[RMDB]
RNA sequence: GGGAACGACUCGAGUAGAGUCGAAAAGAGUCCUGCUGUCACUGUGGAUUGAGCCGGUGAAGCCCUGAGGGAUUUCAUCGCUGAGGUGGAUGGAGAAGCAGCUGGGGGCCUUGGCUGUAAGGACCCCAUUUCGUUUGAAAUUCGUUUCAAACGAAAUAAAAGAAACAACAACAACAAC
Reactivity to 2A3 in 0.01 (KOAc 150mM, MgCl2 10mM, bicine 150mM(pH8.5), 24C), signal-to-noise 9, nucleotides 027 to 126: g080a010g070u040c010c010u010g020c020u030g040u080c020a030c060u040g040u090g110g040a110u060u150g050a030g050c050c010g000g010u020g020a030a010g010c000c010c020u080g070a230g010g040g020a050u030u050u040c020a030u030c020g010c060u050g040a050g060g040u060g050g030a070u080g030g020a070g010a070a020g020c020a000g010c060u090g010g000g000g020g010c000c000u050u040g080g050c060u060g050u110a010a010g010g030a110c000c000c000c000
Reactivity to DMS in 0.01 (KOAc 150mM, MgCl2 10mM, bicine 150mM(pH8.5), 24C), signal-to-noise 9, nucleotides 027 to 126: g000a160g010u010c020c010u000g010c030u000g010u000c030a080c050u010g020u010g010g000a120u010u010g010a090g020c120c030g010g010u000g000a040a040g010c030c010c020u010g020a140g020g010g000a060u010u000u000c020a020u000c030g010c050u010g010a120g000g010u000g000g010a080u010g000g000a080g010a100a090g010c050a040g010c100u010g010g010g000g000g000c010c010u000u000g010g010c080u010g000u020a050a020g000g000a050c010c000c000c020
The data come from the RNA Mapping Database (RMDB), libraries RFM100 and RFMREP. Chemical mapping of a 177-nucleotide RNA with 2A3 and DMS. High DMS reactivity at an A or C suggests that its Watson-Crick edge is free. The RNA was probed in 150 mM KOAc, 10 mM MgCl2 and 150 mM bicine (pH 8.5) at 24 C.